This 177-nucleotide RNA was probed chemically with DMS and 2A3. The RNA was probed in 150 mM KOAc, 10 mM MgCl2 and 150 mM bicine (pH 8.5) at 24 C. Values cover nucleotides 27 to 126. DMS adducts were read by reverse transcription with MarathonRT. The data come from the RNA Mapping Database (RMDB), library M2PK90. For 2A3, 1,830 sequencing reads were counted.
[RMDB]
RNA sequence: GGGAACGACUCGAGUAGAGUCGAAAAGCUCAGUGUGUGUCGCCCCGUCGUCUAGUGCUGGUUCUAGGGCUGGGGCGUCAGCUUCCAGGUCUGACGGGACGGGCAGUAUCUCGCCAUCAACGAUAAAAGUAGUUUCACUUUUCGAAGUGAAACUACUAAAAGAAACAACAACAACAAC
Reactivity to DMS in 0.01 (KOAc 150mM, MgCl2 10mM, bicine 150mM(pH8.5), 24C), signal-to-noise 3, nucleotides 027 to 126: g000c030u000c020a090g020u020g010u010g000u000g010u000c010g000c020c000c010c010g010u000c020g010u010c030u000a040g020u010g030c090u010g030g000u000u000c010u000a030g020g000g030c000u010g030g000g020g010c010g010u000c110a040g000c030u000u010c030c050a080g010g030u000c040u000g000a070c050g020g030g020a050c070g010g000g000c070a050g000u010a060u000c040u000c030g000c040c040a070u010c090a040a080c120g010a130u010a060a100a120
Reactivity to 2A3 in 0.01 (KOAc 150mM, MgCl2 10mM, bicine 150mM(pH8.5), 24C), signal-to-noise 2, nucleotides 027 to 126: g000c020u040c060a080g030u040g000u000g020u020g050u150c010g030c000c000c000c000g040u040c020g030u000c020u020a020g020u010g150c110u090g200g060u130u080c020u010a020g000g050g000c010u060g020g040g000g020c020g020u000c010a010g000c040u150u060c030c000a040g040g080u100c070u090g030a060c030g010g000g050a020c000g010g000g000c020a010g030u070a040u070c070u010c040g000c000c000a080u050c030a090a090c020g020a030u110a120a100a020